The record gives the reactivity of an RNA of 207 nucleotides to 2A3.
For 2A3 the reverse transcriptase was SuperScript II with manganese.
The reactions ran in a buffer of 150 mM KOAc, 10 mM MgCl2 and 150 mM bicine (pH 8.5), at 24 C.
Values cover nucleotides 27 to 156.

RNA sequence: GGGAACGACUCGAGUAGAGUCGAAAAUGGGAUGCUAUAAUAUUUCUGAGAAUUUUCAAUAUCUUAAAAAUUCCCGCCUAUCACAAGACGUCAGUUACUGAACAUAUUCUUCUGGAGAGAGAAUAUGUUGAAGUAAUGAUGAAUCAUGAACCGCCUCGAUGUCUUAGCUGUUCGCAGCUAAGACAUCAAAAGAAACAACAACAACAAC
Reactivity to 2A3 in 0.01 (KOAc 150mM, MgCl2 10mM, bicine 150mM(pH8.5), 24C), signal-to-noise 2, nucleotides 027 to 156: u120g010g020g040a030u030g010c050u080a020u060a300a040u110a140u120u120u100c080u070g040a050g080a190a140u030u200u080u140c040a060a010u070a090u190c040u030u150a100a090a100a140a130u040u010c000c000c010g000c000c000u050a080u080c060a030c020a150a090g030a030c020g000u010c040a050g080u020u010a000c000u010g040a000a010c010a010u000a020u010u010c010u070u000c030u070g160g040a070g000a010g010a000g000a130a000u000a010u000g000u020u010g010a020a000g000u000a010a000u010g000a000u010g020a030a040u050c020a040u040g040a030a030c040c030g040c020c090u050c070